Chemical mapping of a 177-nucleotide RNA with 2A3 and DMS. It was measured as part of the RMDB library OK2TST. The RNA was probed in 150 mM KOAc, 10 mM MgCl2 and 150 mM bicine (pH 8.5) at 24 C. Values cover nucleotides 27 to 126. For 2A3, 1,909 sequencing reads were counted.
[RMDB]
RNA sequence: GGGAACGACUCGAGUAGAGUCGAAAACGACGCUUAUACGUCCGGUGCAGCAGCCUAUUUCGUUGGACCUGCACCGAGGCCGGAUGUCCUCGCCGCGGUAUCCAUACCAACGAUGUCGCUCACGGCAACCCAGGUAUAGCUUCGGCUAUACCUGGGUAAAAGAAACAACAACAACAAC
Reactivity to 2A3 in 0.01 (KOAc 150mM, MgCl2 10mM, bicine 150mM(pH8.5), 24C), signal-to-noise 2, nucleotides 027 to 126: c020g060a000c010g040c080u240u120a070u080a260c010g000u010c040c000g030g000u000g020c010a020g000c010a030g030c000c030u090a170u100u270u130c130g040u130u060g040g020a080c000c000u000g000c000a000c000c000g000a040g010g000c000c010g000g100a090u080g030u050c000c020u050c000g030c030c050g010c000g000g040u040a050u000c050c000a070u130a230c030c010a050a020c060g010a020u000g020u040c010g020c040u050c030a140c060g060g000c000a040
Reactivity to DMS in 0.01 (KOAc 150mM, MgCl2 10mM, bicine 150mM(pH8.5), 24C), signal-to-noise 2, nucleotides 027 to 126: c120g020a010c050g000c090u010u010a080u000a190c050g010u000c020c020g020g000u000g000c020a000g000c190a190g000c010c020u000a120u000u020u000c300g000u030u000g000g000a150c240c010u000g020c010a020c050c000g000a040g000g000c050c050g010g000a010u000g020u000c010c010u000c080g010c030c040g010c060g000g040u010a080u000c050c110a090u010a120c220c130a060a140c120g000a050u000g000u000c050g000c050u000c120a090c020g000g000c040a130